[RMDB]
RNA sequence: GGGAACGACUCGAGUAGAGUCGAAAAGCACGGAGACAUGCACGGAAACGUAGACGGAGGCACCAUGACGAACGUGGCUGUCCGAGGCCUGCGUAUUUGACUGGUAAUUCAGUCGUUAGGACAGCUAGCCUACUCAUGAUUUCGAUCAUGAGUAGGCAAAAGAAACAACAACAACAAC
Reactivity to DMS in 0.01 (KOAc 150mM, MgCl2 10mM, bicine 150mM(pH8.5), 24C), signal-to-noise 4, nucleotides 027 to 126: g020c050a080c100g010g010a110g010a080c070a060u000g000c040a060c060g000g010a080a060a070c080g020u000a060g000a060c080g000g000a110g000g000c040a100c070c080a050u010g020a120c160g000a050a070c150g000u020g010g010c030u000g000u000c010c020g000a140g000g010c010c020u000g010c100g000u000a050u010u020u010g010a000c010u000g000g010u020a080a130u000u010c030a000g010u000c000g020u000u010a100g000g000a040c030a000g010c020u010a160
Reactivity to 2A3 in 0.01 (KOAc 150mM, MgCl2 10mM, bicine 150mM(pH8.5), 24C), signal-to-noise 3, nucleotides 027 to 126: g070c030a010c060g040g020a030g030a030c070a040u080g000c030a010c050g040g030a080a060a000c020g040u050a040g050a040c030g040g060a020g040g000c010a020c020c050a080u090g090a060c100g050a230a010c070g070u040g030g000c040u000g000u000c000c020g010a030g040g050c000c010u060g010c030g030u050a130u070u040u170g000a020c010u020g000g070u120a100a110u140u140c000a000g000u000c010g030u080u070a010g000g010a000c000a010g000c010u020a020